RNA sequence: GGGAACGACUCGAGUAGAGUCGAAAAAGACCAUAGCCAUGGGGAGAGAUGCUAGGAGUGGGGGGCGACCGGAACGAGGAGAAAAGUAAAGAGAGCAACGGGGCUAGCGAGUGGAUGUUCCGCCUCCGAACAACACCUUUCGAGGUGUUGAAAAGAAACAACAACAACAAC
Reactivity to 2A3 in 0.01 (KOAc 150mM, MgCl2 10mM, bicine 150mM(pH8.5), 24C), signal-to-noise 9, nucleotides 027 to 129: a000g060a020c000c000a050u090a020g040c050c040a080u100g000g010g020g010a040g010a020g010a020u100g030c080u100a050g030g040a050g030u120g000g010g000g010g010g000c020g030a030c000c000g010g010a020a030c040g000a020g040g000a020g010a010a070a010a000g120u190a020a070a030g090a010g010a010g010c000a020a050c040g020g010g030g030c020u020a040g030c020g030a020g010u060g040g040a060u080g040u050u020c010c010g030c000c020u000c010c010g020a030a010
Reactivity to DMS in 0.01 (KOAc 150mM, MgCl2 10mM, bicine 150mM(pH8.5), 24C), signal-to-noise 9, nucleotides 027 to 129: a030g020a160c050c020a110u040a090g040c060c100a100u000g000g000g020g010a030g000a070g000a080u040g020c090u050a080g000g000a070g000u060g000g000g040g020g000g000c070g010a050c030c020g040g020a040a030c050g010a000g030g010a060g000a050a070a070a080g040u020a040a060a060g010a070g000a050g000c050a050a060c080g020g030g000g030c020u000a060g030c070g020a070g030u020g000g030a080u010g010u020u020c000c000g030c020c010u000c020c030g020a060a080